[RMDB]
RNA sequence: GGGAACGACUCGAGUAGAGUCGAAAAGGUAUGAUUAGGGUGAGAGCUAGGAACCGUAGGGGUAUUCUCAAAGGAAGCUUUUGCAGUGACGCCCAUGUAAGUGGGAUAUAACAACAGAACUCGUAUGUGUGGCACAGAGAGUUCGCUCUCUGUGCAAGAAAUGAGUACGUUUCGACGUACUCAUUUCAAAAGAAACAACAACAACAAC
Reactivity to DMS in 0.01 (KOAc 150mM, MgCl2 10mM, bicine 150mM(pH8.5), 24C), signal-to-noise 2, nucleotides 027 to 156: g000g030u000a030u010g000a140u010u000a060g020g040g020u000g010a100g010a130g000c050u000a100g010g000a050a040c000c020g020u000a100g020g000g000g000u010a050u000u000c050u010c060a060a110a110g000g020a070a070g020c050u000u010u010u000g020c000a100g000u000g010a140c120g010c010c000c020a030u000g000u000a100a120g050u000g020g010g040a090u000a070u010a090a100c050a030a100c030a090g000a040a030c030u010c050g000u000a100u000g000u010g030u010g010g000c000a020c010a000g010a020g000a030g020u000u000c300g030c010u000c010u000c020u010g020u010g000c000a020a030
Reactivity to 2A3 in 0.01 (KOAc 150mM, MgCl2 10mM, bicine 150mM(pH8.5), 24C), signal-to-noise 4, nucleotides 027 to 156: g070g010u090a040u150g040a070u080u160a080g040g020g000u040g040a100g000a010g030c050u080a050g040g040a030a050c060c030g040u070a040g010g040g000g000u020a090u130u060c080u010c000a070a050a000g060g010a060a030g020c000u030u040u060u070g030c040a020g020u020g050a030c060g030c000c010c020a010u080g050u080a110a110g010u010g000g000g000a010u030a020u030a140a040c080a010a000c010a040g060a090a040c050u060c140g020u070a090u110g060u020g020u040g060g000c000a000c000a000g000a000g000a000g020u070u050c120g070c010u000c000u010c000u000g000u010g000c000a010a000